[RMDB]
RNA sequence: GGGAACGACUCGAGUAGAGUCGAAAAACGUCGGGUGGAAGCACUCCCAAGAAGAGCAGAGAGAAGGCAAGAAUCGGACGAUUUCCCCAUGACGCUGGAGACAUCCUGGAAGGGGAAAGAGGAGGGUACAGUCGCCGGUUCGCCGGCGACAAAAGAAACAACAACAACAAC
Reactivity to DMS in 0.01 (KOAc 150mM, MgCl2 10mM, bicine 150mM(pH8.5), 24C), signal-to-noise 2, nucleotides 027 to 129: a070c030g110u000c120g030g000g040u020g000g010a060a040g060c050a180c040u050c000c060c040a110a080g010a020a060g030a020g040c040a020g110a120g010a080g030a100a040g050g010c090a020a050g010a080a030u070c040g020g010a160c120g020a170u000u000u050c010c020c020c120a060u050g020a090c140g060c060u000g030g030a070g010a080c200a080u020c040c140u080g010g010a170a040g030g000g000g020a010a000a090g000a030g010g000a000g050g020g010u000a040c000a000
Reactivity to 2A3 in 0.01 (KOAc 150mM, MgCl2 10mM, bicine 150mM(pH8.5), 24C), signal-to-noise 2, nucleotides 027 to 129: a000c100g180u060c020g000g000g030u020g030g000a000a000g000c020a000c050u060c030c000c000a020a040g070a000a000g030a010g010c070a010g020a000g030a010g000a100a020g050g000c040a000a060g010a010a010u110c040g010g040a040c000g000a000u010u010u000c000c000c000c000a070u100g070a020c040g000c090u050g000g000a000g000a000c020a050u030c000c020u000g000g000a040a030g000g000g010g020a000a010a000g010a020g000g000a030g000g000g000u020a060c030a030
Chemical mapping of a 170-nucleotide RNA with DMS and 2A3. The reactions ran in a buffer of 150 mM KOAc, 10 mM MgCl2 and 150 mM bicine (pH 8.5), at 24 C. For 2A3 the reverse transcriptase was SuperScript II with manganese. For 2A3, 3,781 sequencing reads were counted. DMS (dimethyl sulfate) methylates the pairing face of unpaired adenines and cytosines. It was measured as part of the RMDB library 15KLIB.